[RMDB]
RNA sequence: GGGAACGACUCGAGUAGAGUCGAAAAUGGGCUGGAAGGGCUGGAUCCAAAGCCUCAGUCUCUUCCACUUUCAUGAGUAAACCAUGUAAGGAAAGAUCUUGAAUCCUAGCUUCAAUUGCCAAGUCACGUUGAUUGGGAUAUUCGUAUCCCAAUCAACAAAAGAAACAACAACAACAAC
Reactivity to 2A3 in 0.01 (KOAc 150mM, MgCl2 10mM, bicine 150mM(pH8.5), 24C), signal-to-noise 7, nucleotides 027 to 126: u070g010g010g020c040u030g020g060a030a010g070g000g000c000u020g020g010a040u110c070c040a110a060a040g050c000c010u060c010a000g030u020c050u010c000u070u000c000c010a020c000u030u050u030c020a020u030g040a050g120u250a060a040a040c030c000a020u020g030u050a030a010g010g050a160a060a010g030a020u040c040u110u120g050a030a020u020c000c020u030a040g010c010u130u120c030a080a130u070u080g030c010c010a070a050g070u120c060a010c180
Reactivity to DMS in 0.01 (KOAc 150mM, MgCl2 10mM, bicine 150mM(pH8.5), 24C), signal-to-noise 4, nucleotides 027 to 126: u010g000g030g010c100u000g000g010a070a020g000g000g000c030u000g020g010a060u020c090c170a100a130a170g000c150c020u000c040a020g010u010c010u000c010u010u000c010c000a090c030u000u000u000c010a010u000g000a100g000u010a090a110a160c110c010a020u010g000u000a050a050g010g010a070a100a060g000a030u000c030u000u020g000a080a050u000c030c010u000a120g020c050u010u010c060a070a090u020u000g000c030c030a090a060g010u020c120a080c190
Overview
This 177-nucleotide RNA was probed chemically with 2A3 and DMS. It was measured as part of the RMDB libraries RFM100 and RFMREP. Conditions: 150 mM KOAc, 10 mM MgCl2 and 150 mM bicine (pH 8.5), 24 C. For DMS the reverse transcriptase was MarathonRT.